[RMDB]
RNA sequence: GGGAACGACUCGAGUAGAGUCGAAAAGGUCGGUUCUUUCCGGAUGGGAAGGGUUUAAGGUAUAGUCCGUUACAAACUGCAGUACAUUUUAGAUGUACGUCUGCUUGGUCUGCUUAUAGCUUUAUCUCACUGAGAUAAAGGUAAAGGGAGCCUGCGGCUCCUUCAAAUUGUUCGCAAUUUGAAGGAGAAAAGAAACAACAACAACAAC
Reactivity to DMS in 0.01 (KOAc 150mM, MgCl2 10mM, bicine 150mM(pH8.5), 24C), signal-to-noise 3, nucleotides 027 to 156: g010g010u000c020g030g000u000u000c040u000u000u000c010c020g000g020a120u010g020g010g010a090a110g020g000g030u000u000u010a050a070g030g010u000a100u010a130g000u000c020c030g020u010u010a120c040a060a050a080c050u000g000c060a150g010u000a020c010a030u000u000u010u000a160g020a070u010g010u000a010c030g020u010c050u000g020c020u000u000g010g010u010c060u000g010c050u000u010a150u000a150g010c000u000u000u000a010u000c000u000c010a200c160u010g010a030g020a050u000a000a020a020g010g010u000a030a080a130g010g010g020a080g020c000c020u000g010c100g030g000
Reactivity to 2A3 in 0.01 (KOAc 150mM, MgCl2 10mM, bicine 150mM(pH8.5), 24C), signal-to-noise 5, nucleotides 027 to 156: g050g020u080c030g000g040u080u020c040u050u100u030c040c030g100g050a090u120g050g000g030a020a040g020g010g000u050u110u160a070a020g010g000u070a030u040a120g040u010c020c020g010u050u060a030c070a060a150a020c080u090g000c040a020g000u020a010c000a020u050u050u090u220a130g070a090u010g000u020a010c020g020u010c030u040g010c030u030u080g010g020u080c020u050g140c020u090u070a070u040a240g040c000u020u000u000a010u000c000u000c020a300c230u210g000a000g000a000u010a000a010a000g020g010u010a050a050a000g010g030g000a010g030c010c020u020g020c010g050g010